[RMDB]
RNA sequence: GGGAACGACUCGAGUAGAGUCGAAAAACAACGUGAUCGCCUCCGGCUCAGAGGACUGUGUGGUCAAAGUGUGGCAGAUCCCCGAUGGCGGGCUGUCGCGAACACUCACCGAACCCGUGGUCGACCACCACCUGAUUUUAUUCGUAAAAUCAGGUGGAAAAGAAACAACAACAACAAC
Reactivity to DMS in 0.01 (KOAc 150mM, MgCl2 10mM, bicine 150mM(pH8.5), 24C), signal-to-noise 6, nucleotides 027 to 126: a090c090a090a090c110g010u010g000a070u010c050g010c040c020u000c080c050g010g010c050u000c070a090g010a130g000g010a080c140u000g020u000g020u010g010g010u000c090a080a080a090g010u000g020u000g000g020c010a030g000a110u000c020c000c010c020g010a160u010g010g000c100g000g010g000c040u000g010u000c010g020c040g010a080a070c070a050c050u000c030a090c070c030g020a100a110c060c000c020g020u000g010g010u000c030g000a110c050c050a180
Reactivity to 2A3 in 0.01 (KOAc 150mM, MgCl2 10mM, bicine 150mM(pH8.5), 24C), signal-to-noise 6, nucleotides 027 to 126: a010c040a020a010c040g050u050g030a070u030c010g010c020c000u020c010c030g060g000c040u030c070a060g030a070g080g040a060c080u060g030u010g020u050g080g040u060c020a060a090a070g140u130g000u010g050g000c000a000g020a280u220c000c000c000c020g190a190u190g130g070c110g030g000g000c010u010g010u020c010g000c010g020a020a000c020a010c020u030c010a030c010c010g020a050a050c010c000c020g010u030g000g020u030c020g000a050c010c000a020